[RMDB]
RNA sequence: GGGAACGACUCGAGUAGAGUCGAAAAGGGGAUUAUUAACAUGAUUAAGUUUAAAUACAAAGGUAAGAAAUACCUUUCAACACAAAAGACGGAUGCUAUUGUAACUAUUCUAGGUGGUACAGCAGUAAUCACAUUGAUAGACUGGUUUAUUAGAUUAUCUAGCAAAAAUGUUCGCAUUUUUGCUAGAAAAAGAAACAACAACAACAAC
Reactivity to DMS in 0.01 (KOAc 150mM, MgCl2 10mM, bicine 150mM(pH8.5), 24C), signal-to-noise 1, nucleotides 027 to 156: g020g020g030g010a120u010u010a080u000u000a060a090c050a080u030g000a170u000u000a050a130g020u000u030u000a080a080a160u000a060c110a000a020a020g000g000u010a030a120g010a120a150a140u000a030c000c010u010u000u010c040a130a050c070a040c110a020a100a040a060g010a080c050g010g010a040u000g000c020u000a040u000u000g010u010a040a100c020u000a100u000u000c050u000a090g000g140u010g030g020u010a060c050a120g030c030a050g000u000a070a060u000c040a030c010a130u000u000g000a080u010a060g020a080c050u000g020g000u000u000u000a080u000u010a100g000a110u000u000a140
Reactivity to 2A3 in 0.01 (KOAc 150mM, MgCl2 10mM, bicine 150mM(pH8.5), 24C), signal-to-noise 1, nucleotides 027 to 156: g030g020g000g010a010u010u100a040u150u120a270a040c030a030u140g020a170u070u080a050a040g020u110u000u060a110a130a010u220a030c040a040a040a000g010g010u040a020a110g060a140a200a010u060a030c010c000u000u020u010c070a120a000c030a020c020a030a250a050a000g020a020c070g060g000a010u040g040c020u030a030u180u080g020u020a080a060c020u000a050u080u100c060u040a020g030g050u000g020g000u020a020c040a060g020c020a000g000u020a000a050u020c000a000c000a080u030u100g020a040u030a050g030a010c050u000g010g000u030u010u010a160u060u010a020g000a050u100u030a050
Structure probing data (DMS and 2A3) for a 207-nucleotide construct. Values are in units of 0.01, from 0 to 300, in steps of 10. DMS adducts were read by reverse transcription with MarathonRT. It was measured as part of the RMDB library OK3TST. For DMS, 1,790 sequencing reads were counted. The reactions ran in a buffer of 150 mM KOAc, 10 mM MgCl2 and 150 mM bicine (pH 8.5), at 24 C. For 2A3 the reverse transcriptase was SuperScript II with manganese.